[RMDB]
RNA sequence: GGGAACGACUCGAGUAGAGUCGAAAAAAUUAUGAACAAGUUAACGAUAGUACGCAAUUUUCAAGACGUACAUUUUUGAAAAUGUUAGGUAUUGGCGGUGCCGGUGUUGCAAUUGGCGCAAGUGGUGAUCAUCGAGUUGAUUCGUCAACUCGAUGAUAAAAGAAACAACAACAACAAC
Reactivity to 2A3 in 0.01 (KOAc 150mM, MgCl2 10mM, bicine 150mM(pH8.5), 24C), signal-to-noise 2, nucleotides 027 to 126: a000a000u300u300a120u160g030a050a000c020a150a000g120u190u100a170a000c000g040a120u050a080g030u040a000c000g000c040a140a240u000u000u020u220c050a090a020g080a080c040g000u120a030c060a040u020u030u000u050u130g100a080a080a000a000u070g000u060u090a040g000g000u130a080u060u070g040g000c010g040g000u000g010c000c000g140g000u020g080u050u060g110c010a010a010u090u050g030g000c010g000c050a060a010g020u000g090g100u100g030
Reactivity to DMS in 0.01 (KOAc 150mM, MgCl2 10mM, bicine 150mM(pH8.5), 24C), signal-to-noise 3, nucleotides 027 to 126: a050a060u030u000a070u020g000a040a080c090a070a060g000u000u000a100a140c070g000a080u020a050g020u010a030c040g020c080a120a070u030u010u010u030c150a060a060g000a060c140g030u040a040c170a070u000u030u030u000u010g000a080a000a050a060u000g000u010u010a060g020g010u000a010u010u000g020g010c060g000g010u010g010c060c040g030g020u020g010u010u000g000c110a030a070u030u010g000g010c030g000c030a030a080g010u000g000g020u010g000